[RMDB]
RNA sequence: GGGAACGACUCGAGUAGAGUCGAAAACGCAAAGCUGCAGCGCGGCGCUCUGGAGGCCUUGCCCCGCGCACUGCGCUUUACAUGGCCCGACGUGAGGGCACUUCGCGGGCAGUGCUGCGGCCUCGUGAAACUGCCCCUAAGUUCGCUUAGGGGCAAACAAAGAAAUAGAGUUCGCUCUAUUUCUUUGAAAAGAAACAACAACAACAAC
Reactivity to 2A3 in 0.01 (KOAc 150mM, MgCl2 10mM, bicine 150mM(pH8.5), 24C), signal-to-noise 5, nucleotides 027 to 156: c040g010c020a060a040a010g000c010u010g010c010a010g050c020g010c020g260g080c100g020c080u010c030u080g040g010a030g020g040c040c100u090u110g010c010c010c000c000g000c000g010c050a050c050u070g020c010g000c030u050u040u090a100c060a110u160g010g000c010c000c020g040a080c000g030u040g030a290g010g010g010c010a010c000u010u020c020g030c090g110g010g000c000a000g010u020g010c000u000g000c000g010g000c000c000u010c010g000u010g010a090a060a020c070u030g000c000c000c000c000u000a010a000g010u010u140c170g070c140u000u000a000g010g000g010g000c010a000a000a000
Reactivity to DMS in 0.01 (KOAc 150mM, MgCl2 10mM, bicine 150mM(pH8.5), 24C), signal-to-noise 2, nucleotides 027 to 156: c030g020c010a060a060a100g010c040u000g030c020a060g020c020g030c020g030g020c020g020c030u000c020u030g040g010a060g020g010c060c110u000u000g010c010c000c010c010g010c090g030c020a040c080u000g020c030g010c000u000u020u010a130c150a130u010g010g010c020c000c020g020a090c050g000u000g010a150g020g000g010c000a020c010u010u000c020g010c140g020g010g030c030a120g020u000g000c010u000g000c000g010g020c020c000u000c090g000u020g000a190a080a090c080u000g000c000c000c000c000u000a010a030g000u000u000c300g010c010u000u010a030g000g000g010g050c020a000a000a030
Structure probing data (2A3 and DMS) for a 207-nucleotide construct. The 2A3 profile rests on 4,818 reads. DMS adducts were read by reverse transcription with MarathonRT. The reactions ran in a buffer of 150 mM KOAc, 10 mM MgCl2 and 150 mM bicine (pH 8.5), at 24 C. DMS (dimethyl sulfate) methylates the pairing face of unpaired adenines and cytosines. Values cover nucleotides 27 to 156. Source: RMDB library M2RFOK, as collected in RNAgym.